[RMDB]
RNA sequence: GGGAACGACUCGAGUAGAGUCGAAAAGAGAGGUCCAUGCCCUUAGCCGUUUAACUAUUUAAACGUCAUCCCAUCAGACGGUUAAACUAUUCUGAACUGGUGCUAAACGGAAUGAGGGUAGUCAUCCCCUUUAGGCCCCAUUCGUGGGGCCUAAAGGAAAAGAAACAACAACAACAAC
Reactivity to 2A3 in 0.01 (KOAc 150mM, MgCl2 10mM, bicine 150mM(pH8.5), 24C), signal-to-noise 3, nucleotides 027 to 126: g110a000g010a010g010g050u080c060c030a060u030g010c000c000c000u000u030a050g010c000c000g020u010u000u010a060a060c090u090a170u060u150u070a100a060a000c020g040u010c020a120u120c010c000c010a090u100c040a020g030a010c010g050g010u030u100a010a050a030c070u110a120u260u060c010u040g110a140a100c070u060g060g040u080g000c020u030a000a000a030c030g040g000a060a140u090g000a010g000g000g000u000a000g000u000c010a050u030c000c030
Reactivity to DMS in 0.01 (KOAc 150mM, MgCl2 10mM, bicine 150mM(pH8.5), 24C), signal-to-noise 2, nucleotides 027 to 126: g000a140g000a050g000g000u030c090c110a130u010g000c000c000c000u000u010a020g010c000c000g000u030u000u000a000a020c070u000a120u010u000u030a030a030a030c000g020u000c060a040u030c110c020c030a180u000c090a180g000a030c060g010g000u000u010a030a050a060c160u040a060u020u020c130u050g010a110a040c110u000g020g010u000g000c100u000a010a000a030c030g010g000a040a120u000g030a010g000g020g020u000a010g050u020c050a080u010c010c040

Structure probing data (2A3 and DMS) for a 177-nucleotide construct. For DMS the reverse transcriptase was MarathonRT. It was measured as part of the RMDB library RFM100. The reactions ran in a buffer of 150 mM KOAc, 10 mM MgCl2 and 150 mM bicine (pH 8.5), at 24 C.